The record gives the reactivity of an RNA of 207 nucleotides to 2A3. Source: RMDB library VIROID, as collected in RNAgym.

RNA sequence: GGGAACGACUCGAGUAGAGUCGAAAAGUACUCACCUGUCGUCGGUAGAGAGUACUCACCUGUCUUCGGUAGAGAGUACUCACCUGUCGUCGGUAGACAGUACUCACCUGCUGUCGACCGUCGAUGCUGACGCCUGUCCGCCGCUCUUCCGCUCUGCCGAGCAAUCGAAGUUCGCUUCGAUUGCUCGAAAAGAAACAACAACAACAAC
Reactivity to 2A3 in 0.01 (KOAc 150mM, MgCl2 10mM, bicine 150mM(pH8.5), 24C), signal-to-noise 2, nucleotides 027 to 156: g000u040a060c010u010c050a100c020c070u080g030u090c030g000u000c010g070g000u080a090g090a020g010a010g190u030a030c010u010c020a070c020c020u090g100u280c080u150u200c140g060g000u120a100g040a010g010a000g200u000a000c000u010c030a100c020c080u070g010u000c000g000u000c000g000g000u000a000g010a000c000a000g010u030a020c040u070c050a060c020c010u040g000c000u010g000u010c000g020a010c000c000g000u020c000g020a030u060g020c010u020g010a020c040g040c020c010u060g000u030c030c010g010c020c030g000c040u020c020u060u000c030c020g030c010u000c010u040g080c040